[RMDB]
RNA sequence: GGGAACGACUCGAGUAGAGUCGAAAAGAUAUGGAUGUCGGGUAGGUACAGACAUGCUGCACCGUGAUCGGAAACGAUCGGUUUAGCAGCAACAGCUGUACCUAUCUCUAGCGUGCAUCCUAAGUCACUUAUGGAUUCAGUUCGCUGAAUCCAUAAGAAAAGAAACAACAACAACAAC
Reactivity to 2A3 in 0.01 (KOAc 150mM, MgCl2 10mM, bicine 150mM(pH8.5), 24C), signal-to-noise 6, nucleotides 027 to 126: g030a010u100a060u250g010g010a000u010g030u060c060g010g000g030u010a000g010g000u000a010c000a000g080a050c040a130u110g000c000u000g010c000a020c010c050g240u240g130a040u020c020g010g030a090a080a080c020g000a020u170c020g000g000u210u190u260a040g000c000a000g010c010a030a010c080a030g060c000u000g010u000a000c000c000u000a000u030c000u000c000u010a040g070c070g190u300g010c000a000u010c000c000u000a110a040g070u050c020a010
Reactivity to DMS in 0.01 (KOAc 150mM, MgCl2 10mM, bicine 150mM(pH8.5), 24C), signal-to-noise 7, nucleotides 027 to 126: g010a060u000a300u010g000g010a010u000g030u000c050g010g010g030u000a010g000g010u010a000c000a010g010a080c110a260u000g010c010u000g030c000a120c030c010g010u010g040a030u010c000g000g000a130a130a220c010g020a010u000c000g000g000u000u000u030a130g020c010a010g010c010a040a070c300a200g020c010u000g000u000a010c000c000u000a000u000c000u010c180u000a140g030c300g020u010g000c010a010u000c000c000u010a040a180g000u000c050a210